About this RNA:
The record gives the reactivity of an RNA of 177 nucleotides to DMS and 2A3.

RNA sequence: GGGAACGACUCGAGUAGAGUCGAAAAGAGAAGGGAAAGCAUUUUGUUCUGACCAUAAUGACAUAAGGAGUUCAUUUCACACCAAACAUCUUUCCAGCAUGUUUCUCCCAUUGAGAAACAUCCUAGCCGGACACUAUCUAUUCGUAGAUAGUGUCCGAAAAGAAACAACAACAACAAC
Reactivity to DMS in 0.01 (KOAc 150mM, MgCl2 10mM, bicine 150mM(pH8.5), 24C), signal-to-noise 4, nucleotides 027 to 126: g010a110g000a140a080g020g000g000a030a030a050g010c240a050u000u030u000u010g000u000u000c090u000g000a110c300c120a130u040a030a050u000g020a030c070a090u010a110a100g010g000a110g010u020u000c010a060u010u000u000c080a030c080a100c100c010a010a020a050c190a040u010c020u000u000u000c030c030a100g020c180a040u000g000u000u020u000c010u000c000c300c180a110u000u020g010a000g000a010a010a010c000a010u000c070c040u000a070g040c180
Reactivity to 2A3 in 0.01 (KOAc 150mM, MgCl2 10mM, bicine 150mM(pH8.5), 24C), signal-to-noise 7, nucleotides 027 to 126: g110a000g030a050a080g050g000g020a030a030a010g040c090a080u010u020u040u120g050u060u050c070u060g060a100c010c010a030u140a160a040u060g040a010c020a040u210a100a130g130g000a050g060u070u020c010a020u020u050u080c080a060c030a030c040c030a050a040a020c040a050u020c000u010u030u000c010c000a010g060c050a040u030g010u000u010u000c020u000c070c090c050a130u160u300g000a000g000a000a000a000c000a000u030c010c010u040a050g040c030
The reactions ran in a buffer of 150 mM KOAc, 10 mM MgCl2 and 150 mM bicine (pH 8.5), at 24 C.